[RMDB]
An RNA of 177 nucleotides, treated with DMS and 2A3 and read out base by base. Reactivities are rounded to 0.1 and cut off at 0 and 3. The RNA was probed in 150 mM KOAc, 10 mM MgCl2 and 150 mM bicine (pH 8.5) at 24 C.
RNA sequence: GGGAACGACUCGAGUAGAGUCGAAAAGAUACGACUAGUACUUUUUGCCCAUCCAUUUUUGACUCGUGAAUUUUUUAACAUGUGAAUUUUGACAAUCUUCUCCGUGGAAGCACCUCCUCUUCAUCGCAUGUUUAGUGUAAUUCGUUACACUAAACAUAAAAGAAACAACAACAACAAC
Reactivity to DMS in 0.01 (KOAc 150mM, MgCl2 10mM, bicine 150mM(pH8.5), 24C), signal-to-noise 9, nucleotides 027 to 126: g010a140u000a030c030g010a140c200u030a120g010u000a030c020u000u000u000u010u010g010c030c000c010a150u020c080c070a060u000u000u010u010u010g000a070c040u000c040g010u010g010a060a010u000u010u010u020u010u010a060a120c100a050u010g010u010g010a070a070u010u000u000u010g000a070c090a060a080u010c030u000u000c020u000c030c040g010u010g010g010a080a080g010c050a060c020c020u000c010c010u000c040u000u000c050a060u000c090g020c150
Reactivity to 2A3 in 0.01 (KOAc 150mM, MgCl2 10mM, bicine 150mM(pH8.5), 24C), signal-to-noise 9, nucleotides 027 to 126: g030a050u050a010c030g100a120c260u150a030g020u020a030c010u020u040u020u080u140g050c000c010c000a020u040c030c010a090u050u060u050u060u150g070a050c010u020c060g040u060g110a170a170u050u040u030u040u100u180a130a050c050a080u080g050u040g120a130a130u090u100u070u130g060a040c030a050a070u020c020u050u000c020u020c020c020g030u040g040g020a050a010g020c000a030c010c000u020c000c000u030c010u060u040c030a080u050c020g020c080